[RMDB]
RNA sequence: GGGAACGACUCGAGUAGAGUCGAAAAGAUGACCUGCUCAUGCAUCAGGCCGAGACUUCAGGCUUCCGAGGCACAUGUUUGAGGUUGAGACUCCCUAGGGAGAGUGGAGUCACCUUUGCUUUGCAGAGUCUAAAUGACGGUUCGCCGUCAUUUAGACAAAAGAAACAACAACAACAAC
Reactivity to DMS in 0.01 (KOAc 150mM, MgCl2 10mM, bicine 150mM(pH8.5), 24C), signal-to-noise 4, nucleotides 027 to 126: g000a150u010g000a090c050c000u000g010c020u000c060a060u000g010c020a040u010c150a040g010g020c220c100g000a180g010a040c030u000u000c020a040g040g000c000u000u010c030c020g010a070g010g010c160a070c150a060u000g000u000u000u000g020a060g000g000u010u010g020a160g000a060c030u000c060c000c020u000a120g010g010g000a050g000a040g010u010g020g000a030g000u000c010a120c030c010u000u000u000g010c020u000u000u000g010c040a030g000a160
Reactivity to 2A3 in 0.01 (KOAc 150mM, MgCl2 10mM, bicine 150mM(pH8.5), 24C), signal-to-noise 4, nucleotides 027 to 126: g130a070u170g040a030c010c000u010g010c010u010c030a060u150g000c000a050u020c060a030g030g030c050c060g150a100g020a070c010u040u030c050a020g210g070c000u040u010c010c020g030a050g010g070c100a030c020a130u160g200u090u100u160g090a040g040g060u060u130g120a060g020a040c010u020c010c000c030u030a060g090g000g000a070g010a010g040u080g000g010a000g010u030c010a070c000c000u000u040u080g000c020u010u040u070g030c040a020g030a030